[RMDB]
RNA sequence: GGGAACGACUCGAGUAGAGUCGAAAAGAAAGCUUGUUCAGUGAUGAAGUCAUGGAAUAAGCGCUGGGCACAGCGCCCGAGCCUGAUGAGGAGAUAUUCCUUGCUGCCUUCCUUCUGAGAACAGCAAUUUAAAUCGUGGAUUCGUCCACGAUUUAAAAAAAGAAACAACAACAACAAC
Reactivity to 2A3 in 0.01 (KOAc 150mM, MgCl2 10mM, bicine 150mM(pH8.5), 24C), signal-to-noise 8, nucleotides 027 to 126: g080a030a070a000g010c020u040u040g010u020u020c040a050g020u030g080a080u090g110a160a050g110u040c020a030u130g060g050a050a030u060a080a020g000c020g000c040u040g000g040g000c080a100c070a220g070c050g010c020c000c010g040a060g030c000c030u140g050a160u100g050a050g050g020a030g030a050u080a090u120u070c000c000u010u050g010c020u040g030c040c010u040u050c020c020u130u120c080u180g110a180g020a090a010c000a010g000c000a000a000
Reactivity to DMS in 0.01 (KOAc 150mM, MgCl2 10mM, bicine 150mM(pH8.5), 24C), signal-to-noise 7, nucleotides 027 to 126: g000a110a100a190g000c010u000u010g010u000u000c000a180g030u020g000a050u010g010a100a090g000u000c030a010u030g010g010a020a020u010a070a060g000c000g020c080u020g000g010g030c140a110c180a060g030c130g020c010c010c020g000a100g010c020c010u000g000a110u020g010a060g000g000a050g000a100u020a070u010u010c010c020u000u000g000c060u010g010c090c050u000u010c030c040u010u040c110u020g010a130g000a060a080c030a020g000c070a070a090